Overview
Chemical mapping of a 177-nucleotide RNA with DMS and 2A3. The RNA was probed in 150 mM KOAc, 10 mM MgCl2 and 150 mM bicine (pH 8.5) at 24 C.

RNA sequence: GGGAACGACUCGAGUAGAGUCGAAAAGAAGGUGUGUUCGCACACCUUCAAAUAGGUCAGACAAAAGCUUCCUGGAGUCAAGACCUGUAAACCAAAGGAGCAAAACCACCUACUUCGGUAGGUGGAAGCCCAAUGUUCAAUUCGUUGAACAUUGGGCAAAAGAAACAACAACAACAAC
Reactivity to DMS in 0.01 (KOAc 150mM, MgCl2 10mM, bicine 150mM(pH8.5), 24C), signal-to-noise 2, nucleotides 027 to 126: g000a010a000g000g000u010g030u000g060u000u010c280g040c020a000c010a000c010c000u040u000c000a030a050a060u010a040g010g010u000c000a230g000a010c030a100a140a120a130g010c090u000u000c000c040u010g030g000a300g000u000c000a080a200g020a000c000c000u000g000u000a010a090a120c010c010a040a100a100g010g000a030g030c070a110a060a100a100c000c000a000c010c000u000a010c000u000u010c180g030g000u000a010g000g020u000g000g000a000a030
Reactivity to 2A3 in 0.01 (KOAc 150mM, MgCl2 10mM, bicine 150mM(pH8.5), 24C), signal-to-noise 2, nucleotides 027 to 126: g000a000a000g000g000u000g010u000g010u030u070c160g070c040a000c000a000c010c000u020u000c000a000a000a000u040a000g010g000u010c010a020g000a030c010a040a110a010a010g010c030u160u080c030c000u060g050g050a020g000u020c030a120a070g000a010c000c020u010g070u080a060a050a010c020c000a070a040a070g050g030a040g000c000a000a010a010a100c000c000a000c000c000u010a000c020u030u080c290g110g000u000a000g000g010u010g020g000a010a010
The data come from the RNA Mapping Database (RMDB), library M2PK50. 2A3 adducts were read by reverse transcription with SuperScript II with manganese. The 2A3 profile rests on 2,336 reads.